[RMDB]
Conditions: 150 mM KOAc, 10 mM MgCl2 and 150 mM bicine (pH 8.5), 24 C. Chemical mapping of a 177-nucleotide RNA with DMS. DMS adducts were read by reverse transcription with MarathonRT. Values are in units of 0.01, from 0 to 300, in steps of 10. Reactivities are given for positions 27 through 126. For DMS, 555 sequencing reads were counted. Source: RMDB library M2PK90, as collected in RNAgym.

RNA sequence: GGGAACGACUCGAGUAGAGUCGAAAAAGAGAGCGCGAAAAAGAUCGAUCGAUCGUUUGAACGCGCAAGUUUAAGUUUGAUACGGGCAUACAAGCUAGCUAGCUAGCAAAACAAACUUAAUAAAGAACAGAGUUAUUUCGUUCGCGAAAUAACUCUGAAAAGAAACAACAACAACAAC
Reactivity to DMS in 0.01 (KOAc 150mM, MgCl2 10mM, bicine 150mM(pH8.5), 24C), signal-to-noise 1, nucleotides 027 to 126: a050g010a130g040a090g010c000g000c020g000a090a130a010a050a040g000a000u000c000g030a180u020c160g000a020u020c000g000u000u000u000g000a130a160c050g000c010g010c060a040a030g010u000u000u000a000a000g000u000u000u000g010a070u020a180c200g040g020g010c180a050u030a120c120a020a150g010c040u000a000g000c120u020a070g020c010u010a000g000c000a140a050a100a180c010a000a000a000c020u000u000a000a110u010a070a100a190g010a040a120